Notes
This 177-nucleotide RNA was probed chemically with 2A3 and DMS. For DMS, 57,134 sequencing reads were counted. It was measured as part of the RMDB library OK1LIB. Conditions: 150 mM KOAc, 10 mM MgCl2 and 150 mM bicine (pH 8.5), 24 C.
RNA sequence: GGGAACGACUCGAGUAGAGUCGAAAAACGCCCCCCGUCCUCGCUCACGGUCUCGUAUAUUGACUCGUCGUCCUCGUAGGGGGCGUGCCGUUCGCGGGCCGAGGCGGCGUGGGUGGCUUUGCGGCGGCAGACGAAUACAAUUCGUUGUAUUCGUCUGAAAAGAAACAACAACAACAAC
Reactivity to 2A3 in 0.01 (KOAc 150mM, MgCl2 10mM, bicine 150mM(pH8.5), 24C), signal-to-noise 9, nucleotides 027 to 126: a000c030g020c000c000c000c000c000c000g050u070c020c020u050c030g030c010u050c020a080c030g030g030u030c050u060c080g090u060a100u030a080u200u280g060a060c030u020c070g040u010c010g070u040c030c010u070c070g120u220a220g000g030g000g000g000c000g000u010g010c000c010g040u100u140c070g000c010g020g010g000c000c010g020a050g040g030c080g010g000c010g000u080g000g010g020u060g020g000c020u070u090u130g050c050g010g000c000g000g020
Reactivity to DMS in 0.01 (KOAc 150mM, MgCl2 10mM, bicine 150mM(pH8.5), 24C), signal-to-noise 9, nucleotides 027 to 126: a060c070g000c010c000c010c060c000c080g000u020c020c030u000c040g010c050u010c060a100c050g000g000u000c030u010c070g030u020a100u040a090u040u030g000a060c040u010c050g000u010c020g010u020c010c010u010c120g020u030a140g000g010g000g000g010c010g020u000g010c020c030g010u000u020c080g020c020g000g000g000c020c010g010a120g010g020c070g000g000c060g030u010g010g010g020u010g010g000c070u010u010u010g010c060g000g010c020g000g000